[RMDB]
RNA sequence: GGGAACGACUCGAGUAGAGUCGAAAAGACCAAUCGUUCGCGAUUGGUCAAAAGGUGGAUGCUACGCUACCGAAGUAGCAAAAGUGCAGCUACAUAGCACAAAAACUUGGUUGUUCGCAACCAAGAACGAUGCGAUAACGUUCGCGUUAUCGCAUCGAAAAGAAACAACAACAACAAC
Reactivity to DMS in 0.01 (KOAc 150mM, MgCl2 10mM, bicine 150mM(pH8.5), 24C), signal-to-noise 2, nucleotides 027 to 126: g010a000c000c000a020a000u000c000g030u160u000c230g040c020g010a010u010u000g000g000u010c000a010a030a050a100g020g030u000g000g000a110u010g010c050u000a050c090g010c020u000a070c040c080g000a120a120g000u000a000g010c030a040a020a120a060g000u000g040c060a130g010c080u020a060c060a090u000a070g000c010a040c050a050a060a070a130a120c010u000u000g000g000u010u000g010u000u000c220g000c030a000a000c000c000a020a000g000a050a080
Reactivity to 2A3 in 0.01 (KOAc 150mM, MgCl2 10mM, bicine 150mM(pH8.5), 24C), signal-to-noise 1, nucleotides 027 to 126: g000a000c000c000a010a000u000c000g020u030u030c280g000c000g100a000u000u000g010g010u000c000a010a000a010a030g040g010u040g030g060a090u060g050c030u030a000c040g010c020u050a040c000c050g080a120a000g030u020a000g000c000a000a020a000a110g040u020g000c030a020g000c050u070a050c050a200u130a060g000c040a000c040a040a070a040a020a020c010u020u000g020g000u000u000g020u030u050c210g000c050a010a010c000c000a000a000g000a000a000
This 177-nucleotide RNA was probed chemically with DMS and 2A3. The data come from the RNA Mapping Database (RMDB), library M2PK50. For DMS the reverse transcriptase was MarathonRT. The reactions ran in a buffer of 150 mM KOAc, 10 mM MgCl2 and 150 mM bicine (pH 8.5), at 24 C. The 2A3 profile rests on 2,699 reads. For DMS, 1,413 sequencing reads were counted.